[RMDB]
RNA sequence: GGGAACGACUCGAGUAGAGUCGAAAAACCUUACACGUUUAGUAUGUACGGUUACAAGAAUGCUCGCGCAUGGGGUCGCAUCAUUGCAGAUAACUAUGAAUCCGAAAUGCUGGAUGCUUACGCAAGCUGGAUUGAUACGCCGCUAAAUGAAUGGGGCUGUCAUACAAUGUUUCGACAUUGUAUGACAAAAAGAAACAACAACAACAAC
Reactivity to DMS in 0.01 (KOAc 150mM, MgCl2 10mM, bicine 150mM(pH8.5), 24C), signal-to-noise 3, nucleotides 027 to 156: a030c000c010u000u000a090c040a080c030g010u000u010u000a140g020u000a050u010g050u000a040c100g020g010u000u010a160c080a090a120g010a150a150u010g020c000u000c030g030c050g000c050a050u000g020g010g020g010u000c020g050c030a070u000c040a010u000u010g010c040a040g000a080u000a080a120c090u000a090u010g000a110a040u000c020c040g020a060a050a080u000g010c050u000g020g010a060u000g020c030u010u010a060c090g010c050a070a070g010c020u010g030g010a210u010u010g000a130u000a040c010g010c010c020g000c020u000a040a050a060u000g000a130a050u000g020g000g000g020c060
Reactivity to 2A3 in 0.01 (KOAc 150mM, MgCl2 10mM, bicine 150mM(pH8.5), 24C), signal-to-noise 4, nucleotides 027 to 156: a000c000c010u020u030a030c050a010c050g030u060u080u100a050g030u050a060u200g060u070a020c050g020g010u050u030a040c010a050a030g060a090a050u070g010c040u020c030g010c010g000c040a050u130g040g010g000g030u060c040g000c040a000u040c020a020u020u150g010c020a010g040a100u060a130a030c050u070a080u260g120a110a030u050c070c030g070a050a060a060u100g010c020u030g030g020a060u040g030c030u110u130a020c020g010c040a020a020g010c000u030g000g060a070u010u010g020a030u020a100c030g030c040c010g010c070u040a050a080a020u130g080a020a060u060g000g000g010g040c030